[RMDB]
The record gives the reactivity of an RNA of 177 nucleotides to 2A3 and DMS. The RNA was probed in 150 mM KOAc, 10 mM MgCl2 and 150 mM bicine (pH 8.5) at 24 C.
RNA sequence: GGGAACGACUCGAGUAGAGUCGAAAAAAGUGGUGUGGCACUGCUCCGGCGAGGACGUGGGCGGACCGGCGGGAUGGGCUCCAGUCACCGGCUCGGUGGGCGACCGUCCCUUCCCAUGAGUCCACACAUUAAGGCAAACCUUCGGGUUUGCCUUAAUAAAAGAAACAACAACAACAAC
Reactivity to 2A3 in 0.01 (KOAc 150mM, MgCl2 10mM, bicine 150mM(pH8.5), 24C), signal-to-noise 3, nucleotides 027 to 126: a000a000g110u100g020g020u050g010u080g020g010c010a000c010u050g010c030u040c040c020g050g000c030g010a110g000g040a060c050g030u250g020g030g000c020g050g020a090c030c040g020g010c080g010g100g000a020u050g040g000g070c090u040c050c030a030g070u040c010a040c160c000g110g200c170u140c120g020g090u040g000g010g050c060g020a040c000c000g030u080c020c000c040u020u040c040c000c000a030u050g000a010g030u050c000c020a010c000a000c000
Reactivity to DMS in 0.01 (KOAc 150mM, MgCl2 10mM, bicine 150mM(pH8.5), 24C), signal-to-noise 2, nucleotides 027 to 126: a050a030g040u010g000g010u010g000u020g000g030c050a150c030u010g000c070u000c020c000g000g000c090g000a260g000g000a100c060g050u020g000g000g040c070g000g020a130c080c020g020g000c300g040g000g010a010u000g010g000g000c030u040c010c030a090g030u030c010a040c000c000g000g000c150u030c080g010g020u000g010g030g010c080g040a060c040c040g000u000c010c010c020u030u010c000c000c010a050u010g000a120g020u010c000c000a040c030a010c050
It was measured as part of the RMDB library RFM100. The 2A3 profile rests on 1,260 reads. 2A3 adducts were read by reverse transcription with SuperScript II with manganese.